[RMDB]
RNA sequence: GGGAACGACUCGAGUAGAGUCGAAAAUUGCGCGCAGGUCGAGAAUAAUGGCACAACUGUCACAGUGAACAUUGCUGCAGCAGAUCUAAUUGCACUUCGAGCAGGCGCAAAUACGUGGACACGAUUUGUUGCGGUCGCAGAACAACUAUUUAAUAGCAAAGAAGCAUGUGUUCGCACAUGCUUCUUUAAAAGAAACAACAACAACAAC
Reactivity to 2A3 in 0.01 (KOAc 150mM, MgCl2 10mM, bicine 150mM(pH8.5), 24C), signal-to-noise 2, nucleotides 027 to 156: u020u040g000c040g000c010g000c010a000g040g120u070c010g020a010g100a150a040u150a120a050u080g080g030c050a040c040a220a070c070u140g020u090c030a010c010a080g000u060g070a100a070c040a120u150u070g010c000u010g000c010a030g000c010a000g000a040u060c050u090a110a050u090u010g000c010a010c020u030u140c090g050a060g000c000a030g000g000c060g000c010a020a020a020u130a020c050g050u020g160g000a010c030a020c160g060a080u000u030u020g080u010u030g000c000g000g030u010c040g040c040a010g010a040a000c040a000a010c050u030a040u150u130u150a230a160u290a050g150c160
Reactivity to DMS in 0.01 (KOAc 150mM, MgCl2 10mM, bicine 150mM(pH8.5), 24C), signal-to-noise 2, nucleotides 027 to 156: u000u000g020c010g000c060g030c050a090g050g050u000c040g000a170g030a130a090u000a060a090u000g020g000c010a080c010a140a080c030u010g040u000c080a050c020a040g060u000g000a070a130c080a150u010u050g010c000u000g010c000a060g030c030a050g020a040u000c030u000a040a100u000u000g000c020a110c030u000u000c050g010a060g040c110a040g000g050c060g000c020a020a030a080u000a070c090g030u000g060g020a130c020a100c130g000a110u000u000u000g100u000u010g020c030g010g030u010c010g020c060a130g010a110a160c060a040a080c050u000a090u000u010u000a090a090u020a010g010c010

Annotation
Chemical mapping of a 207-nucleotide RNA with 2A3 and DMS. Reactivities are given for positions 27 through 156. The data come from the RNA Mapping Database (RMDB), library OK3TST. For 2A3, 752 sequencing reads were counted. The RNA was probed in 150 mM KOAc, 10 mM MgCl2 and 150 mM bicine (pH 8.5) at 24 C. For DMS, 2,327 sequencing reads were counted.